[RMDB]
RNA sequence: GGGAACGACUCGAGUAGAGUCGAAAAGAUAUGGAGGCUCAUGUGGAGCUCUGUGAUCGGAAACGAUCAUUGAGCUAUGAAGCAUAGGCCUCCUAAGUCAAAACGUCGCGCCUUCGGGCGCGACGAACGAGUUAAAGAAGUUCGCUUCUUUAACUCGAAAAGAAACAACAACAACAAC
Reactivity to DMS in 0.01 (KOAc 150mM, MgCl2 10mM, bicine 150mM(pH8.5), 24C), signal-to-noise 1, nucleotides 027 to 126: g000a050u000a190u000g020g000a030g000g010c040u040c060a000u010g020u000g020g000a080g020c020u000c000u000g000u000g010a000u000c000g000g000a050a080a140c000g010a030u000c000a030u000u000g000a010g030c000u000a220u000g000a210a270g000c000a000u000a050g000g010c000c010u010c010c010u000a000a050g010u000c020a130a060a150a210c060g060u010c030g150c060g130c000c060u000u000c300g170g040g150c040g150c010g030a000c000g020a080a100
Reactivity to 2A3 in 0.01 (KOAc 150mM, MgCl2 10mM, bicine 150mM(pH8.5), 24C), signal-to-noise 2, nucleotides 027 to 126: g000a000u010a000u060g010g010a030g040g040c020u050c280a050u030g020u020g000g080a070g040c000u040c010u000g010u020g000a000u010c010g010g050a010a000a000c020g000a000u000c000a000u010u010g000a000g000c000u100a300u300g040a040a000g000c010a020u040a080g210g000c000c000u020c010c000u010a010a000g000u020c000a000a010a100a120c020g030u000c030g070c140g170c080c040u130u240c300g090g030g230c130g030c010g040a010c030g010a010a000
Background: Conditions: 150 mM KOAc, 10 mM MgCl2 and 150 mM bicine (pH 8.5), 24 C. Chemical mapping of a 177-nucleotide RNA with DMS and 2A3. For 2A3, 2,477 sequencing reads were counted. 2A3 adducts were read by reverse transcription with SuperScript II with manganese. For DMS the reverse transcriptase was MarathonRT. The DMS profile rests on 966 reads.